[RMDB]
The data come from the RNA Mapping Database (RMDB), library RFM100. Structure probing data (DMS and 2A3) for a 177-nucleotide construct. For DMS, 1,622 sequencing reads were counted. 2A3 adducts were read by reverse transcription with SuperScript II with manganese.
RNA sequence: GGGAACGACUCGAGUAGAGUCGAAAAGAAAGAAAGAAAGCCUGCUCCCGCCCCAGCAGCACACUGUGGUUUGUACGGCACUGUGGCCACGUCCAAACCACACUGUGGUGUUAGAGCGAGGGUGGAACUAUAGGCCGGAUUUCGAUCCGGCCUAUAGAAAAGAAACAACAACAACAAC
Reactivity to DMS in 0.01 (KOAc 150mM, MgCl2 10mM, bicine 150mM(pH8.5), 24C), signal-to-noise 1, nucleotides 027 to 126: g010a130a100a150g000a090a110a030g020a170a040a130g010c160c000u000g000c030u000c010c040c030g000c000c000c050c130a020g000c000a000g000c000a000c000a000c060u020g040u000g020g000u000u000u010g000u000a030c000g000g000c090a070c190u040g010u050g010g010c030c060a070c000g030u000c030c020a000a000a000c000c000a000c000a000c080u010g000u000g010g010u000g000u000u000a040g030a080g010c010g000a200g050g000g010u020g000g000a100a160
Reactivity to 2A3 in 0.01 (KOAc 150mM, MgCl2 10mM, bicine 150mM(pH8.5), 24C), signal-to-noise 3, nucleotides 027 to 126: g110a010a030a010g080a020a100a010g070a040a100a000g090c000c020u030g010c030u030c000c000c010g000c000c000c000c000a000g000c000a020g040c000a000c000a000c010u010g000u010g010g010u000u010u000g000u010a010c000g000g060c050a050c210u240g060u180g260g020c050c040a080c090g000u000c020c000a010a000a000c000c000a000c000a000c000u030g000u000g030g170u000g000u020u030a020g010a000g040c040g010a060g000g000g000u010g000g010a030a020